Structure probing data (2A3) for a 177-nucleotide construct. The reactions ran in a buffer of 150 mM KOAc, 10 mM MgCl2 and 150 mM bicine (pH 8.5), at 24 C. Values cover nucleotides 27 to 126. High 2A3 reactivity points to a flexible backbone, as in loops and unpaired stretches. For 2A3 the reverse transcriptase was SuperScript II with manganese.

RNA sequence: GGGAACGACUCGAGUAGAGUCGAAAAGAAUUGGUAUGUAAGCUACGCCUUCCGGUAGCUGCGUCACACUUUAAGAGUGUGCAUACUGAGCCGAAGCUCAGCUUCGGUCCCCCAAGGGAAGAUCAAAACGCUCCGAUGCAUUCGUGCAUCGGAGCGUAAAAGAAACAACAACAACAAC
Reactivity to 2A3 in 0.01 (KOAc 150mM, MgCl2 10mM, bicine 150mM(pH8.5), 24C), signal-to-noise 2, nucleotides 027 to 126: g090a000a050u050u070g000g000u000a000u000g000u000a000a000g000c000u000a000c000g020c000c000u000u000c000c000g000g000u000a000g000c000u000g030c000g010u000c000a000c000a000c000u070u160u160a300a090g260a010g300u000g000u000g000c000a000u000a000c000u000g010a000g000c000c000g000a000a030g030c010u090c300a000g030c000u030u000c000g000g000u020c000c000c040c000c020a030a020g010g060g000a020a010g020a010u180c060a030a180a020